The record gives the reactivity of an RNA of 177 nucleotides to DMS and 2A3.
For 2A3, 7,892 sequencing reads were counted.
The RNA was probed in 150 mM KOAc, 10 mM MgCl2 and 150 mM bicine (pH 8.5) at 24 C.
2A3 adducts were read by reverse transcription with SuperScript II with manganese.
[RMDB]
RNA sequence: GGGAACGACUCGAGUAGAGUCGAAAAGGACUUAGGUUCGCCUAAGUCCAAAUAACGUCUACAAGUACGGUAGACGAAGAUUACGUACAGUACAGAAGUACAAAAGGAGAGACUUCGGUCUCUCCAACCUCUAUUGUUGGUUCGCCAACAAUAGAGGAAAAGAAACAACAACAACAAC
Reactivity to DMS in 0.01 (KOAc 150mM, MgCl2 10mM, bicine 150mM(pH8.5), 24C), signal-to-noise 3, nucleotides 027 to 126: g000g000a050c000u010u000a010g010g010u000u020c190g030c000c000u000a000a000g000u000c000c010a010a040a070u020a080a160c030g000u000c000u000a000c010a080a080g040u000a010c080g020g000u000a010g000a020c000g000a030a100g010a110u000u000a090c150g010u000a100c120a100g000u010a040c150a130g020a150a090g010u000a010c040a050a090a140a130g000g000a030g000a000g000a010c010u000u020c190g000g000u000c000u010c010u000c000c000a050a020
Reactivity to 2A3 in 0.01 (KOAc 150mM, MgCl2 10mM, bicine 150mM(pH8.5), 24C), signal-to-noise 5, nucleotides 027 to 126: g000g000a000c000u010u010a010g020g000u040u060c210g060c040c000u000a000a000g000u000c000c000a010a000a000u000a010a010c010g000u000c000u000a000c010a130a110g100u040a070c060g060g000u010a010g010a000c020g000a020a010g050a050u170u190a040c070g020u040a040c050a100g050u030a020c010a090g210a260a040g150u020a020c040a040a080a030a060g000g000a010g000a000g000a000c000u030u050c260g080g000u000c000u000c000u010c000c000a000a000